Chemical mapping of a 207-nucleotide RNA with 2A3. For 2A3 the reverse transcriptase was SuperScript II with manganese. The RNA was probed in 150 mM KOAc, 10 mM MgCl2 and 150 mM bicine (pH 8.5) at 24 C.
[RMDB]
RNA sequence: GGGAACGACUCGAGUAGAGUCGAAAAGAACACGUCUCGGGACGACGCUAAACUCGCCCUGGUCGGGAUGGGUUUAACGACCCCUCGGGUUUCCUAGUUCCUAAAACUAGGUGGUGGACUCAUAUAAAAAACUUCUACACGUUCGCGUGUAGAAGAAGAUCACUUGAACCUUCGGGUUCAAGUGAUCAAAAGAAACAACAACAACAAC
Reactivity to 2A3 in 0.01 (KOAc 150mM, MgCl2 10mM, bicine 150mM(pH8.5), 24C), signal-to-noise 1, nucleotides 027 to 156: g000a050a010c060a030c000g000u020c000u010c000g020g060g010a070c300g010a020c030g090c140u000a010a010a000c000u010c010g130c090c010c020u080g000g090u070c050g040g030g020a070u130g060g000g000u000u050u130a130a030c000g020a020c000c000c000c010u020c030g040g000g010u000u040u040c020c000u010a000g000u060u070c020c050u070a040a040a000a000c020u000a030g000g000u020g000g030u040g030g020a070c040u020c070a050u140a030u250a140a070a020a000a090a080c010u000u020c000u020a000c000a000c010g060u040u040c180g040c000g150u050g000u010a000g010a010a000g000a010a000